[RMDB]
RNA sequence: GGGAACGACUCGAGUAGAGUCGAAAAGAUAUGGACCGUUACGAACGUACACCUUGACGAGAAUAGUGUCGGAAACGACAUGAAAUUCGAUGAGUCACUGGGUGUACGUUCGUAACGGUCCUAAGUCGGAGUAGCUAAUGUUCGCAUUAGCUACUCCAAAAGAAACAACAACAACAAC
Reactivity to DMS in 0.01 (KOAc 150mM, MgCl2 10mM, bicine 150mM(pH8.5), 24C), signal-to-noise 2, nucleotides 027 to 126: g010a120u010a300u000g000g030a000c000c000g020u010u000a000c000g000a050a020c000g000u000a010c000a020c010c000u000u000g000a040c000g000a190g010a030a030u020a190g000u000g030u000c010g000g000a120a120a220c010g000a000c010a030u000g020a180a150a060u010u000c000g010a180u010g000a300g000u010c010a090c300u010g060g020g000u000g020u000a000c030g000u000u020c000g000u010a010a000c000g030g000u000c000c000u000a000a040g000u000c080

The record gives the reactivity of an RNA of 177 nucleotides to DMS.
Source: RMDB library TTRINS, as collected in RNAgym.
The RNA was probed in 150 mM KOAc, 10 mM MgCl2 and 150 mM bicine (pH 8.5) at 24 C.
The DMS profile rests on 1,306 reads.
For DMS the reverse transcriptase was MarathonRT.